[RMDB]
RNA sequence: GGGAACGACUCGAGUAGAGUCGAAAAUGUCCGCCAGAUGUUUCUGCCUUAAAGUAAGUGAAAGCAUACUGGCAAACCUACUUGAAAUGGGUGCAAAGAGAAAAUUAUGGUGGGCUUCGGACCACAACUAGCCUUGAUAAUUCGUUAUCAAGGCUAGAAAAGAAACAACAACAACAAC
Reactivity to 2A3 in 0.01 (KOAc 150mM, MgCl2 10mM, bicine 150mM(pH8.5), 24C), signal-to-noise 9, nucleotides 027 to 126: u100g010u000c000c000g000c000c000a000g000a030u100g060u030u010u000c020u070g060c010c010u110u120a140a130a030g030u040a080a060g020u060g180a140a020a000g030c010a030u110a300c070u110g060g000c010a020a000a010c010c000u030a020c020u060u080g070a060a120a130u170g040g010g010u090g060c130a120a160a030g110a040g060a030a030a030a010u190u190a100u130g030g000u010g000g000g000c000u050u040c050g060g040a020c000c010a030c010a050a050
Reactivity to DMS in 0.01 (KOAc 150mM, MgCl2 10mM, bicine 150mM(pH8.5), 24C), signal-to-noise 9, nucleotides 027 to 126: u020g010u000c010c020g010c000c010a020g010a090u040g000u000u000u000c010u000g010c020c030u020u020a110a100a060g010u000a010a070g040u010g010a120a060a110g020c010a100u020a070c100u010g000g020c010a040a140a030c010c010u000a030c050u000u030g010a080a130a230u010g010g000g010u000g010c170a060a120a150g010a050g000a030a020a020a020u010u030a100u010g000g010u000g000g000g010c020u000u010c110g000g010a230c010c030a100c210a070a170
Background
Chemical mapping of a 177-nucleotide RNA with 2A3 and DMS. For 2A3 the reverse transcriptase was SuperScript II with manganese. Conditions: 150 mM KOAc, 10 mM MgCl2 and 150 mM bicine (pH 8.5), 24 C.